[RMDB]
The record gives the reactivity of an RNA of 207 nucleotides to 2A3 and DMS.
Values cover nucleotides 27 to 156.
2A3 adducts were read by reverse transcription with SuperScript II with manganese.
Values are in units of 0.01, from 0 to 300, in steps of 10.
For DMS, 1,603 sequencing reads were counted.

RNA sequence: GGGAACGACUCGAGUAGAGUCGAAAAGAGCGUUUCGCUCUCGCCGCUUAAGCGGUGAGCCGUAGCACUGAUCUGUCUUUGGGUCAGGUGGGGUCAAACUCACAGCUACGACACUUACAAAGAAUCGGGAUCUAGCCGGGUCACACGCGUUAGGCCUCAAGUCUUUCAAGUUCGCUUGAAAGACUUGAAAAGAAACAACAACAACAAC
Reactivity to 2A3 in 0.01 (KOAc 150mM, MgCl2 10mM, bicine 150mM(pH8.5), 24C), signal-to-noise 6, nucleotides 027 to 156: g020a000g000c030g010u080u180u230c070g030c020u000c010u000c020g050c030c020g010c040u290u260a200a030g000c000g010g000u010g010a010g050c010c010g000u030a010g000c030a020c250u010g000a010u000c010u020g100u030c020u070u080u110g030g000g000u010c010a020g040g000u010g000g000g010g000u060c050a050a050a070c010u020c010a010c000a030g060c030u080a040c060g050a000c020a010c030u200u270a040c030a020a050a010g040a050a100u160c140g030g010g040a060u010c020u030a010g030c010c000g020g010g090u120c060a040c010a030c100g020c010g070u030u030a020g000g010c000c000u000
Reactivity to DMS in 0.01 (KOAc 150mM, MgCl2 10mM, bicine 150mM(pH8.5), 24C), signal-to-noise 1, nucleotides 027 to 156: g000a020g060c030g000u000u000u010c070g010c020u010c010u000c010g000c000c000g010c030u010u000a040a130g020c020g000g020u000g010a010g010c000c040g000u020a040g000c010a300c070u000g010a010u010c040u000g010u000c180u000u010u010g000g000g000u000c010a090g020g040u000g000g010g040g020u000c230a060a060a180c000u000c000a020c000a240g000c030u000a040c060g010a000c010a050c070u010u000a200c040a020a070a060g040a050a090u010c060g000g000g010a040u000c030u000a060g040c020c070g000g040g010u000c020a120c010a070c070g010c040g030u000u010a050g010g030c010c000u040
About this RNA
It was measured as part of the RMDB library RSTRND.